[RMDB]
RNA sequence: GGGAACGACUCGAGUAGAGUCGAAAAGGGUUAGCGUUCGCGCUAACCCCAGGAUCGAACAUGUCAAAUCUCGCAGACAUGAAACGAACAAAAGCGAGAAAACUAGACAGUCAUUCGUGACUGUCAACAACGUAUUUCAAUUCGUUGAAAUACGUUGAAAAGAAACAACAACAACAAC
Reactivity to DMS in 0.01 (KOAc 150mM, MgCl2 10mM, bicine 150mM(pH8.5), 24C), signal-to-noise 7, nucleotides 027 to 126: g010g010g010u000u000a010g010c000g030u010u010c220g020c020g040c000u000a000a000c000c000c000c040a020g010g010a160u000c070g010a130a300c010a010u000g000u000c000a030a110a090u000c000u000c000g030c000a060g000a010c000a000u000g000a050a110a100c240g010a080a050c170a020a020a090a080g000c000g010a010g010a040a110a080a060c230u010a120g000a010c000a010g010u000c000a030u000u010c170g010u000g000a010c000u000g000u000c000a060a150
Reactivity to 2A3 in 0.01 (KOAc 150mM, MgCl2 10mM, bicine 150mM(pH8.5), 24C), signal-to-noise 9, nucleotides 027 to 126: g000g000g000u000u000a000g000c010g010u030u050c280g000c000g000c110u000a000a000c000c000c000c000a040g050g060a120u140c060g040a060a050c010a010u010g000u000c010a020a050a290u020c020u000c010g000c000a010g010a010c010a000u020g030a110a040a020c090g080a040a010c040a080a070a020a010g000c000g000a000g000a030a020a010a010c080u070a050g000a000c000a000g010u000c000a010u040u100c190g090u030g000a000c000u000g000u010c000a000a010
This 177-nucleotide RNA was probed chemically with DMS and 2A3. 2A3 adducts were read by reverse transcription with SuperScript II with manganese. The RNA was probed in 150 mM KOAc, 10 mM MgCl2 and 150 mM bicine (pH 8.5) at 24 C.